[RMDB]
RNA sequence: GGGAACGACUCGAGUAGAGUCGAAAAACUGUCCCUGACAAUGGUGAGCAAGCUCAGCUCGUACUGAGAAGCCUAAAGUUGUUAUCAUGGUUACCCACCUUAGCUAAAACAGGUUUACUUUUUCAGAACGGCAUCCGUAAUUCGUUACGGAUGCCGUAAAAGAAACAACAACAACAAC
Reactivity to 2A3 in 0.01 (KOAc 150mM, MgCl2 10mM, bicine 150mM(pH8.5), 24C), signal-to-noise 1, nucleotides 027 to 126: a000c080u080g010u040c000c000c000u020g000a000c040a040a000u010g140g060u090g060a060g040c050a230a000g000c000u060c000a030g090c000u140c160g010u110a240c010u020g000a070g000a000a000g030c000c000u300a060a000a000g000u000u000g050u000u000a020u050c100a090u020g010g000u070u140a070c010c030c050a030c000c000u100u170a110g020c080u120a020a020a000a040c000a010g010g000u050u030u050a040c000u000u000u000u050u210c120a060g000a120